Structure probing data (DMS and 2A3) for a 177-nucleotide construct. For 2A3, 3,803 sequencing reads were counted. DMS adducts were read by reverse transcription with MarathonRT.
[RMDB]
RNA sequence: GGGAACGACUCGAGUAGAGUCGAAAAGAUAUGGACAAGCGGGAGCUUGUGAGAAAGAACUACAGCGAGCUUUCGGAAACGAAAGAACGCUGCUUUCUCACAAGCAUCGAUCGCUUGUCCUAAGUCAGAUACGAAAUUACUUCGGUAAUUUCGUAUCAAAAGAAACAACAACAACAAC
Reactivity to DMS in 0.01 (KOAc 150mM, MgCl2 10mM, bicine 150mM(pH8.5), 24C), signal-to-noise 2, nucleotides 027 to 126: g000a070u000a300u000g000g030a000c000a020a010g020c000g030g000g010a030g010c000u000u000g010u010g000a020g000a030a030a010g000a130a050c100u010a300c010a010g010c010g010a060g010c000u000u000u010c000g000g010a130a130a250c010g010a020a000a010g000a000a040c000g020c000u000g000c000u000u000u010c000u000c000a000c000a020a000g000c000a030u010c130g010a120u040c000g020c000u000u000g010u000c000c010u000a000a030g020u010c060a160
Reactivity to 2A3 in 0.01 (KOAc 150mM, MgCl2 10mM, bicine 150mM(pH8.5), 24C), signal-to-noise 1, nucleotides 027 to 126: g020a030u090a070u120g010g000a020c000a010a000g020c010g000g070g000a020g000c000u000u070g020u030g010a010g010a000a020a000g040a060a070c280u300a090c300a000g010c010g030a020g000c040u040u010u000c010g020g050a150a070a030c000g000a020a000a010g000a040a010c000g000c000u000g040c000u000u000u020c010u000c000a010c000a000a000g000c000a010u030c010g000a010u080c020g000c010u010u000g000u010c000c010u000a000a000g030u000c060a020